[RMDB]
RNA sequence: GGGAACGACUCGAGUAGAGUCGAAAAGAUAUGGAUCGGUGGAAGCCCACUAGGUCGUUGAAAUCGGAAACGAUGGAGACCAUGGGAUAACACCGAUCCUAAGUCAAAACCGAAGUUCGCUUCGGAACGUCUAAUGAUCGUUCGCGAUCAUUAGACGAAAAGAAACAACAACAACAAC
Reactivity to DMS in 0.01 (KOAc 150mM, MgCl2 10mM, bicine 150mM(pH8.5), 24C), signal-to-noise 2, nucleotides 027 to 126: g000a020u000a300u000g000g000a000u000c020g000g000u010g010g010a090a140g000c000c000c010a050c300u000a130g030g010u000c000g000u000u020g050a110a120a000u010c000g000g000a130a130a180c010g030a020u000g000g010a090g010a000c000c010a290u010g000g000g000a020u000a190a210c000a030c000c000g010a000u000c000c000u000a000a040g000u000c030a090a000a050a090c010c000g010a050a000g010u010u000c190g000c020u000u000c000g010g010a040a090
Reactivity to 2A3 in 0.01 (KOAc 150mM, MgCl2 10mM, bicine 150mM(pH8.5), 24C), signal-to-noise 1, nucleotides 027 to 126: g010a010u060a050u130g000g000a010u020c010g000g000u000g100g010a230a300g080c000c000c000a020c120u190a160g050g000u040c040g040u280u050g000a020a010a000u000c010g000g000a090a010a020c000g000a010u010g040g050a030g000a020c010c000a010u000g000g000g000a020u030a110a000c000a000c010c010g020a000u000c000c000u000a020a000g000u000c010a000a000a120a210c010c000g010a010a000g000u070u280c300g040c180u050u020c000g000g010a080a040
Background
The record gives the reactivity of an RNA of 177 nucleotides to DMS and 2A3. The 2A3 profile rests on 2,083 reads. The reactions ran in a buffer of 150 mM KOAc, 10 mM MgCl2 and 150 mM bicine (pH 8.5), at 24 C.